[RMDB]
RNA sequence: GGGAACGACUCGAGUAGAGUCGAAAAUAAUCAGAUUCAAAACAGUUCCACGUAAAUUGUUUGAACUCCUAUAUUAUUAUAUCAGUCGUGGCUGACAAGGAUAGAGUCGCAAAUCUAUUCUUAUUUAUCUGACAUUGUCCUUCGGGACAAUGUCAGAAAAAGAAACAACAACAACAAC
Reactivity to 2A3 in 0.01 (KOAc 150mM, MgCl2 10mM, bicine 150mM(pH8.5), 24C), signal-to-noise 1, nucleotides 027 to 126: u160a000a070u110c200a150g020a040u000u000c020a000a000a120a120c000a000g000u000u000c010c020a030c030g180u270a050a000a000u000u000g040u030u000u000g020a020a000c030u010c000c030u000a020u000a000u260u020a060u150u160a030u120a210u200c000a000g000u000c000g050u000g000g000c000u000g020a000c090a080a000g000g000a000u000a000g020a000g050u190c120g120c240a060a090a010u010c000u060a060u000u020c000u000u020a130u000u150u000a070